This 170-nucleotide RNA was probed chemically with DMS and 2A3. The RNA was probed in 150 mM KOAc, 10 mM MgCl2 and 150 mM bicine (pH 8.5) at 24 C. The DMS profile rests on 42,146 reads.
RNA sequence: GGGAACGACUCGAGUAGAGUCGAAAACCUCGGAUGGGCCGCUUCCGGCAGGGAAGCCCGAAGGUGGGAGAGGGGGAGAACACUUCGAGAGUUGGGGGAUAGAAAGAGGGCGAAUUUCCUCGGGAGGUAACAUCCCAGUUCGCUGGGAUGAAAAGAAACAACAACAACAAC
Reactivity to DMS in 0.01 (KOAc 150mM, MgCl2 10mM, bicine 150mM(pH8.5), 24C), signal-to-noise 8, nucleotides 027 to 129: c030c020u020c060g000g030a100u050g010g000g010c060c090g010c090u040u020c060c000g010g020c170a120g010g010g030a070a050g040c230c040c020g020a070a010g030g040u020g000g000g000a100g000a030g040g000g030g000g030a030g020a090a060c100a080c060u000u000c100g000a060g020a100g020u040u020g000g020g010g000g010a030u030a000g000a040a070a040g000a060g000g010g030c140g010a070a070u010u000u000c040c020u040c050g000g020g010a040g000g030u000a060a130
Reactivity to 2A3 in 0.01 (KOAc 150mM, MgCl2 10mM, bicine 150mM(pH8.5), 24C), signal-to-noise 8, nucleotides 027 to 129: c000c000u000c010g060g020a080u060g030g000g030c040c020g030c020u070u030c030c010g060g030c050a020g090g020g000a010a020g030c000c000c010g040a040a030g060g040u130g020g020g010a060g030a050g010g000g000g020g000a030g020a020a010c060a020c050u090u110c070g060a070g000a020g060u090u110g000g000g000g000g000a020u060a080g060a020a050a000g050a040g000g000g000c030g050a040a080u080u060u070c010c010u000c020g000g000g000a030g020g000u020a020a010
The data come from the RNA Mapping Database (RMDB), library 15KLIB. 2A3 adducts were read by reverse transcription with SuperScript II with manganese.